Overview
This 177-nucleotide RNA was probed chemically with DMS. The reactions ran in a buffer of 150 mM KOAc, 10 mM MgCl2 and 150 mM bicine (pH 8.5), at 24 C. For DMS, 1,104 sequencing reads were counted.
[RMDB]
RNA sequence: GGGAACGACUCGAGUAGAGUCGAAAAGUUGUAAGGUUCGCCUUACAACAAAAUAAAACAGGCUAGUACCGGCCUGAAAAAGGUACGAAGAUCGAAAGAACAAAAGACACUUGUUCGCAAGUGUCAAUCAUUAGGUUCUCUUCGGAGAACCUAAUGAAAAAGAAACAACAACAACAAC
Reactivity to DMS in 0.01 (KOAc 150mM, MgCl2 10mM, bicine 150mM(pH8.5), 24C), signal-to-noise 2, nucleotides 027 to 126: g010u010u000g010u010a010a000g000g040u010u010c190g020c000c000u000u000a030c000a000a000c000a050a050a030a030u030a000a070a150a160c260a020g010g040c020u000a140g010u000a000c000c000g000g000c000c010u000g000a000a000a020a110a100g010g020u010a010c000g000a080a040g000a080u000c100g030a130a140a200g010a050a110c100a060a030a110a080g020a010c010a010c020u000u000g000u000u000c250g020c000a020a010g020u010g000u000c010a040a070